Annotation
This 170-nucleotide RNA was probed chemically with DMS and 2A3. The RNA was probed in 150 mM KOAc, 10 mM MgCl2 and 150 mM bicine (pH 8.5) at 24 C. 2A3 adducts were read by reverse transcription with SuperScript II with manganese. Values cover nucleotides 27 to 129. The 2A3 profile rests on 3,023 reads.

[RMDB]
RNA sequence: GGGAACGACUCGAGUAGAGUCGAAAAUCACGCGGUGGGAGCAAGACCAUAGCGAUAGGAAGAGAUGCUAGGAGUUGGUGGCGACCGGAGCGAGGAGAAAAGCAAAGAAAGCAACGGGGCUAGCCGAGGGGAGGUGGCUUCGGCCACCUCAAAAGAAACAACAACAACAAC
Reactivity to DMS in 0.01 (KOAc 150mM, MgCl2 10mM, bicine 150mM(pH8.5), 24C), signal-to-noise 3, nucleotides 027 to 129: u100c060a180c130g010c010g040g150u020g020g020g000a040g030c110a120a060g010a070c040c000a020u060a140g010c040g020a160u040a120g000g020a040a060g010a020g000a130u030g020c050u060a070g020g040a080g080u010u000g000g000u030g010g010c130g030a050c040c070g020g020a040g030c120g030a040g020g000a030g010a000a000a000a000g050c170a080a040a040g020a050a120a080g040c020a080a070c070g000g030g000g060c000u040a000g040c040c020g020a020g000g000g000
Reactivity to 2A3 in 0.01 (KOAc 150mM, MgCl2 10mM, bicine 150mM(pH8.5), 24C), signal-to-noise 2, nucleotides 027 to 129: u150c010a030c000g030c000g000g090u040g030g000g000a070g040c010a040a030g030a000c020c010a050u080a020g030c020g090a120u080a050g100g000a000a010g030a010g050a030u030g000c050u040a010g030g000a000g040u070u060g050g000u010g000g000c000g000a080c010c010g020g000a010g000c060g000a010g000g080a020g000a020a130a010a000g050c090a100a030a060g070a070a080a010g020c000a060a020c040g020g000g000g000c060u030a020g000c020c010g030a030g000g020g000

About this RNA:
It was measured as part of the RMDB library 15KLIB.